[RMDB]
Structure probing data (2A3 and DMS) for a 177-nucleotide construct. Source: RMDB library OK1LIB, as collected in RNAgym.
RNA sequence: GGGAACGACUCGAGUAGAGUCGAAAACAAGCUGUAGUGAUAAGGGCCGUGUAGAUAUGCGCUCGUUUCGCUAUUUAUGCAGAUUAAGAUAAUCCUUAUCGGCUGAGAUUUUCGAGAUCGGUGCUGCUCGUCAUUUAUCGUUCGCGAUAAAUGACGAAAAAGAAACAACAACAACAAC
Reactivity to 2A3 in 0.01 (KOAc 150mM, MgCl2 10mM, bicine 150mM(pH8.5), 24C), signal-to-noise 6, nucleotides 027 to 126: c040a030a060g020c040u100g040u290a090g040u080g060a020u010a050a050g020g010g000c070c030g020u060g000u060a070g060a070u130a030u300g050c070g000c020u060c080g060u060u180u020c020g000c000u010a030u020u120u030a060u100g000c000a010g050a160u140u140a080a000g070a130u110a120a030u080c000c000u000u030a060u070c030g030g000c030u040g020a050g040a280u000u060u120u130c060g010a080g070a130u020c020g050g070u060g060c000u010g040c000
Reactivity to DMS in 0.01 (KOAc 150mM, MgCl2 10mM, bicine 150mM(pH8.5), 24C), signal-to-noise 3, nucleotides 027 to 126: c090a170a040g020c020u000g030u010a060g000u050g020a040u010a010a040g000g010g020c090c080g040u000g000u000a070g000a060u070a020u050g020c020g040c070u020c140g000u010u030u000c030g000c000u000a020u010u000u000a040u010g020c030a130g010a100u000u010a090a140g010a100u010a150a100u010c010c000u000u000a040u020c060g000g000c040u000g000a150g000a090u010u000u010u010c040g000a120g000a090u010c010g000g010u000g000c050u000g020c090
The reactions ran in a buffer of 150 mM KOAc, 10 mM MgCl2 and 150 mM bicine (pH 8.5), at 24 C. 2A3 adducts were read by reverse transcription with SuperScript II with manganese. For 2A3, 3,736 sequencing reads were counted.